Record summary
The record gives the reactivity of an RNA of 177 nucleotides to 2A3 and DMS. 2A3 adducts were read by reverse transcription with SuperScript II with manganese. Source: RMDB library TTRDES, as collected in RNAgym. The 2A3 profile rests on 9,878 reads.
[RMDB]
RNA sequence: GGGAACGACUCGAGUAGAGUCGAAAAGAUAUGGAGUCCCAGGUAGCGAAGAACUAGAUCGGAAACGAUCUAGGGAGCUACUUGGUGACUCCUAAGUCAAACCUUGACUACUUCGGUAGUCAAGGAAGGUUUACGUUAUGUUCGCAUAACGUAAACCAAAAGAAACAACAACAACAAC
Reactivity to 2A3 in 0.01 (KOAc 150mM, MgCl2 10mM, bicine 150mM(pH8.5), 24C), signal-to-noise 2, nucleotides 027 to 126: g020a000u080a050u180g010g000a000g010u000c000c000c010a000g020g010u000a000g000c050g190a300a010g000a110a030c010u000a000g010a010u000c000g010g010a100a020a020c010g000a010u020c000u010a000g010g000g000a000g000c000u000a010c000u000u000g000g000u110g000a000c000u000c000c000u000a060a000g020u010c030a050a060a140c000c000u000u020g000a000c000u000a000c010u020u090c210g130g000u010a000g000u000c000a000a000g010g010a010a100
Reactivity to DMS in 0.01 (KOAc 150mM, MgCl2 10mM, bicine 150mM(pH8.5), 24C), signal-to-noise 3, nucleotides 027 to 126: g020a050u010a300u000g000g000a000g010u000c000c010c000a020g000g000u000a000g010c000g000a090a230g000a170a210c000u000a000g000a010u000c020g010g010a160a100a230c000g030a000u000c000u000a010g000g000g000a090g010c000u000a010c000u000u000g000g020u040g010a010c000u020c000c000u000a010a060g010u020c040a100a130a190c000c000u000u000g000a030c000u000a000c000u010u020c220g030g010u000a000g000u000c000a020a000g020g010a030a030
2A3 is a SHAPE reagent: it acylates the 2'-hydroxyl of flexible nucleotides of all four kinds. For DMS, 3,347 sequencing reads were counted.